The record gives the reactivity of an RNA of 177 nucleotides to DMS and 2A3.
For 2A3 the reverse transcriptase was SuperScript II with manganese.
RNA sequence: GGGAACGACUCGAGUAGAGUCGAAAAAGCACCAGACAUUAAGAUACACACCUGGUGAUUGGCGAAAUCUUUGCAAGGAUGUGGAGGCCAUUCUCCAUGCCAAUAUACCCCUGGUGUCCAACGUACAGCGAAAGUAUGCUUUCGAGCAUACUUUCGCAAAAGAAACAACAACAACAAC
Reactivity to DMS in 0.01 (KOAc 150mM, MgCl2 10mM, bicine 150mM(pH8.5), 24C), signal-to-noise 1, nucleotides 027 to 126: a090g000c040a080c010c010a050g000a190c130a090u000u000a100a070g000a100u000a130c090a030c060a070c180c020u000g000g010u000g000a080u000u000g000g010c000g010a030a040a080u000c000u030u000u010g000c250a150a130g000g000a060u000g010u000g010g000a060g000g030c160c300a080u020u000c000u000c000c000a040u000g020c000c000a000a090u000a080u000a220c070c010c090c050u000g000g000u000g000u000c070c090a070a070c130g010u000a040c230a130
Reactivity to 2A3 in 0.01 (KOAc 150mM, MgCl2 10mM, bicine 150mM(pH8.5), 24C), signal-to-noise 1, nucleotides 027 to 126: a010g100c060a050c000c000a010g030a030c040a050u230u220a150a030g050a110u210a120c070a000c020a020c090c030u010g050g000u000g010a000u020u010g020g010c060g070a130a020a050u030c060u110u090u190g050c110a080a090g030g010a080u020g000u000g040g020a000g020g000c190c070a110u210u040c000u000c000c000a020u090g000c000c030a010a010u140a030u060a030c050c010c030c000u030g000g000u000g020u000c040c040a080a130c050g020u170a070c020a030
Overview: For DMS, 597 sequencing reads were counted. Source: RMDB library OK2TRN, as collected in RNAgym. The 2A3 profile rests on 995 reads.